[RMDB]
RNA sequence: GGGAACGACUCGAGUAGAGUCGAAAAAUUUGAUUGUGAGCACUUUUUAGAAGACUUUAAGGUGGAUAUUUUGUAGCAAGGACUUAGAAAUUCUUCUUUAUUUUCAAUUUCAGAUCUCAUCAAGCCAUCCAGUCACAUAAUUCGUUAUGUGACUGGAAAAAGAAACAACAACAACAAC
Reactivity to DMS in 0.01 (KOAc 150mM, MgCl2 10mM, bicine 150mM(pH8.5), 24C), signal-to-noise 1, nucleotides 027 to 126: a030u020u000u000g030a110u000u010g050u000g020a070g030c080a070c060u000u000u000u000u050a080g010a080a220g010a050c150u000u000u010a030a010g020g010u000g020g000a060u000a090u010u010u010u000g000u000a030g030c080a160a110g010g010a080c020u010u010a130g030a060a040a110u010u000c040u000u010c010u000u000u000a050u030u030u010u000c050a020a200u000u010u000c100a090g000a080u010c000u000c020a080u010c080a030a110g010c110c060a150